[RMDB]
RNA sequence: GGGAACGACUCGAGUAGAGUCGAAAACCUCUCUGAGACGCUGCGCUGUUCAAAGAAACUUGACUUUGAGACCCUUCCAACCUACGUACUUCGCCAUCGAUAUUUGUUUGACGACCAGAGCUUCGGCACGCACAUGGGUUUUCGAACCCAUGUGCGUAAAAGAAACAACAACAACAAC
Reactivity to 2A3 in 0.01 (KOAc 150mM, MgCl2 10mM, bicine 150mM(pH8.5), 24C), signal-to-noise 2, nucleotides 027 to 126: c000c010u000c000u000c010u040g090a050g030a100c030g000c020u000g010c010g040c000u070g040u060u030c020a060a030a060g070a090a140a050c060u110u140g050a010c000u050u090u090g030a040g000a030c000c030c000u060u030c030c010a050a040c030c000u060a070c020g050u020a070c040u040u010c010g010c020c010a070u050c030g040a040u020a100u120u090u060g130u000u000u120g040a050c010g010a010c010c000a040g000a010g030c000u000u030c010g010g000c040
Reactivity to DMS in 0.01 (KOAc 150mM, MgCl2 10mM, bicine 150mM(pH8.5), 24C), signal-to-noise 1, nucleotides 027 to 126: c000c000u000c140u010c030u000g000a170g080a100c050g000c060u030g000c140g080c030u000g030u000u030c010a030a080a030g010a050a050a100c150u050u030g000a130c030u000u000u010g000a030g030a300c050c010c010u020u000c060c060a120a080c010c010u000a100c110g030u030a130c050u010u000c010g000c000c000a040u030c010g060a070u000a020u010u010u000g090u010u000u000g000a190c120g000a080c020c040a050g000a060g000c010u000u000c030g000g010c170